[RMDB]
The data come from the RNA Mapping Database (RMDB), library 15KLIB. An RNA of 170 nucleotides, treated with DMS and 2A3 and read out base by base. The DMS profile rests on 10,408 reads.
RNA sequence: GGGAACGACUCGAGUAGAGUCGAAAAAUUCCUGAUGAGAAACAGAAUGGUCACAGUUUAUAUCUAGCAGACAAUUUGACUGCUGAUGAAACAAAGGCGCUUAAAGAGUUAUAUGGCCCCGUUGAUCGACGUCCGUUGUUCGCAACGGACAAAAGAAACAACAACAACAAC
Reactivity to DMS in 0.01 (KOAc 150mM, MgCl2 10mM, bicine 150mM(pH8.5), 24C), signal-to-noise 3, nucleotides 027 to 129: a120u010u020c040c000u040g010a110u020g020a090g020a050a010a020c090a030g020a200a100u000g030g000u000c000a020c070a030g050u020u000u000a000u040a050u030c040u000a000g000c000a100g040a090c050a120a090u020u030u000g000a160c030u010g000c030u000g050a020u060g010a090a020a030c030a080a080a080g050g000c070g040c080u010u030a020a040a060g030a110g030u000u000a000u030a090u000g010g020c000c000c000c010g010u000u000g010a060u030c000g070a150c140
Reactivity to 2A3 in 0.01 (KOAc 150mM, MgCl2 10mM, bicine 150mM(pH8.5), 24C), signal-to-noise 2, nucleotides 027 to 129: a010u010u030c010c000u030g050a080u120g040a020g040a030a030a010c000a060g040a100a100u160g050g010u020c030a060c010a000g000u020u050u000a270u000a020u080c120u120a000g010c020a040g050a190c010a140a110u020u070u300g040a030c020u000g010c000u000g020a010u050g010a010a010a010c000a000a090a000g030g000c020g000c000u010u030a020a090a000g160a000g010u300u030a170u010a080u110g000g000c000c000c000c030g060u000u100g020a110u020c060g030a010c060

Conditions: 150 mM KOAc, 10 mM MgCl2 and 150 mM bicine (pH 8.5), 24 C.